[RMDB]
RNA sequence: GGGAACGACUCGAGUAGAGUCGAAAAUGACGAGCCUAGAUAGGUACUUAACCUCUAAUUCGAUAAGCCGUCAGUGUCCGAUAGGGUACUGAUUGUGAUGACGACUAGAAAGUCAGCGGGUGGAAGCCCCGUUCCAUUUGUUCGCAAAUGGAACGGGAAAAGAAACAACAACAACAAC
Reactivity to 2A3 in 0.01 (KOAc 150mM, MgCl2 10mM, bicine 150mM(pH8.5), 24C), signal-to-noise 4, nucleotides 027 to 126: u120g020a000c040g010a010g060c000c000u040a060g020a150u160a040g030g030u090a120c070u130u130a060a040c000c010u010c040u090a200a170u080u080c020g030a060u040a100a020g020c010c010g010u000c000a000g000u010g000u000c000c000g020a140u220a220g020g000g020u010a010c000u010g000a020u030u030g020u030g040a030u120g040a010c040g000a010c010u010a040g060a100a050a010g010u020c010a010g030c050g030g010g000u030g010g050a020a050g030c000
Reactivity to DMS in 0.01 (KOAc 150mM, MgCl2 10mM, bicine 150mM(pH8.5), 24C), signal-to-noise 3, nucleotides 027 to 126: u000g010a050c020g000a130g050c130c010u000a080g010a060u020a040g000g040u010a090c140u030u030a110a050c060c000u020c040u000a030a080u030u000c040g020a040u000a180a180g000c000c000g000u000c000a000g000u010g000u000c000c000g020a120u040a100g020g000g000u000a020c010u000g030a000u000u000g000u020g000a100u040g010a120c090g000a040c140u030a030g010a070a040a140g000u000c030a120g050c090g000g010g030u000g000g070a170a120g000c070
The record gives the reactivity of an RNA of 177 nucleotides to 2A3 and DMS. The RNA was probed in 150 mM KOAc, 10 mM MgCl2 and 150 mM bicine (pH 8.5) at 24 C. Source: RMDB libraries RFM100 and RFMREP, as collected in RNAgym. In probing experiments dimethyl sulfate is read out at A N1 and C N3, which are open when not base-paired.